This 177-nucleotide RNA was probed chemically with 2A3 and DMS. The DMS profile rests on 1,449 reads. It was measured as part of the RMDB library OK1LIB.

RNA sequence: GGGAACGACUCGAGUAGAGUCGAAAAAACGCCAACGUACCUUCCACCGUGAUCUUGGUGGCUCCCUUGAAGCAGUUGAUGAUCACGUCGCAGCGAUUGCAGCCCAGCUUCCAGGUUGGCGCAAGCGGAGCGUACUCCACUUCGGUGGAGUACGCUCAAAAGAAACAACAACAACAAC
Reactivity to 2A3 in 0.01 (KOAc 150mM, MgCl2 10mM, bicine 150mM(pH8.5), 24C), signal-to-noise 3, nucleotides 027 to 126: a000a000c040g010c000c000a060a000c070g070u080a080c010c010u020u060c020c010a010c010c000g050u060g100a210u190c110u140u190g020g010u030g030g060c000u080c020c010c000u000u080g060a080a000g030c020a010g040u010u070g070a210u050g030a010u050c010a010c050g080u110c080g030c100a040g020c050g090a060u020u110g000c000a000g010c040c020c020a020g010c040u010u070c050c030a080g100g000u010u030g040g040c000g000c040a030a000g050c070g100
Reactivity to DMS in 0.01 (KOAc 150mM, MgCl2 10mM, bicine 150mM(pH8.5), 24C), signal-to-noise 1, nucleotides 027 to 126: a060a010c010g020c020c010a010a020c040g000u000a100c100c050u050u000c020c020a020c050c080g000u040g000a050u000c020u040u010g030g000u000g000g090c230u000c000c030c020u020u010g000a070a070g000c080a070g000u000u000g030a140u030g040a000u000c050a040c040g000u000c190g000c070a120g000c090g030a020u060u000g000c000a120g000c050c050c000a100g000c060u000u000c100c110a100g010g010u000u000g000g010c020g020c210a100a010g000c250g010